[RMDB]
RNA sequence: GGGAACGACUCGAGUAGAGUCGAAAAGUGGGGGGAAGCUGUUGACAUAACAAGACCUCGACAAGCAAUCAAUUGGGAGUCAUUGCAGCACUUCAGUCUAAUACACCUUUAAACUGAACUUAUUAAUAAUUCCGUGAUCGGUAAUGCUCUUCAAAUACGGUUAGGUAAUAUUCGUAUUACCUAACCGAAAAGAAACAACAACAACAAC
Reactivity to DMS in 0.01 (KOAc 150mM, MgCl2 10mM, bicine 150mM(pH8.5), 24C), signal-to-noise 3, nucleotides 027 to 156: g070u020g010g010g040g030g070g010a090a140g040c050u000g020u040u010g000a100c100a300u000a140a130c030a080a100g010a070c030c000u000c040g000a140c060a080a140g000c060a080a130u000c040a060a150u010u000g010g000g000a110g010u000c020a070u000u010g020c070a090g010c040a100c100u010u000c020a030g010u000c010u010a040a050u000a050c080a100c120c060u020u000u000a030a050a030c000u000g010a040a040c090u000u020a160u000u020a060a100u010a020a140u010u000c020c000g030u010g000a050u000c010g020g000u000a080a120u010g000c010u000c070u000u010c030a020a010a080u010a110
Reactivity to 2A3 in 0.01 (KOAc 150mM, MgCl2 10mM, bicine 150mM(pH8.5), 24C), signal-to-noise 6, nucleotides 027 to 156: g100u080g000g000g000g000g000g000a010a010g000c030u010g000u030u020g010a040c020a080u220a100a010c030a050a030g030a070c020c010u020c040g060a050c040a080a020g050c040a030a110u140c030a050a160u140u110g020g000g000a040g060u090c010a010u010u080g020c040a010g020c010a010c000u020u020c010a020g020u000c040u070a080a060u110a120c060a150c050c000u040u110u090a060a100a010c020u020g020a010a010c020u090u090a040u240u110a250a120u130a150a100u200u030c030c000g020u050g080a130u160c030g020g020u030a030a060u050g000c000u000c000u170u120c050a050a050a150u240a070